Structure probing data (DMS and 2A3) for a 177-nucleotide construct.
The RNA was probed in 150 mM KOAc, 10 mM MgCl2 and 150 mM bicine (pH 8.5) at 24 C.
Source: RMDB library OK2TST, as collected in RNAgym.
Values cover nucleotides 27 to 126.
The 2A3 profile rests on 2,637 reads.
For DMS, 3,484 sequencing reads were counted.
Values are in units of 0.01, from 0 to 300, in steps of 10.
For DMS the reverse transcriptase was MarathonRT.
RNA sequence: GGGAACGACUCGAGUAGAGUCGAAAAGACAAUGAUCGGGUGCGUCUGAUCGGGCGGCUCCGUCUGCUCAUGGUGGGGCUGGUCGUCAUCUGCGGGGCUUGCGCAUGUGACCGCGUGUCGGCCGGCCACGGUACUCCCAUUUCGAUGGGAGUACCGUAAAAGAAACAACAACAACAAC
Reactivity to DMS in 0.01 (KOAc 150mM, MgCl2 10mM, bicine 150mM(pH8.5), 24C), signal-to-noise 2, nucleotides 027 to 126: g010a080c080a090a090u000g010a060u010c070g010g020g000u000g010c050g000u010c010u000g000a090u000c140g000g010g020c030g000g000c030u010c040c100g000u010c040u000g000c080u000c060a080u010g020g020u010g020g040g000g010c010u000g020g010u000c000g020u000c010a020u010c130u010g050c010g010g000g000g020c050u000u010g010c170g000c130a070u010g010u010g020a140c010c010g020c030g010u000g000u000c000g020g000c000c000g010g000c000c010
Reactivity to 2A3 in 0.01 (KOAc 150mM, MgCl2 10mM, bicine 150mM(pH8.5), 24C), signal-to-noise 2, nucleotides 027 to 126: g020a020c050a010a210u180g000a080u050c000g030g010g020u140g110c020g030u010c020u040g110a170u100c040g010g000g010c020g040g010c030u070c070c030g050u060c010u040g010c010u010c060a070u130g140g000u110g050g000g000g020c000u010g010g010u000c000g020u010c000a060u010c060u110g000c010g010g020g020g010c040u130u170g040c120g000c070a080u150g070u060g160a190c000c010g020c010g020u000g010u010c010g020g000c000c000g000g000c020c000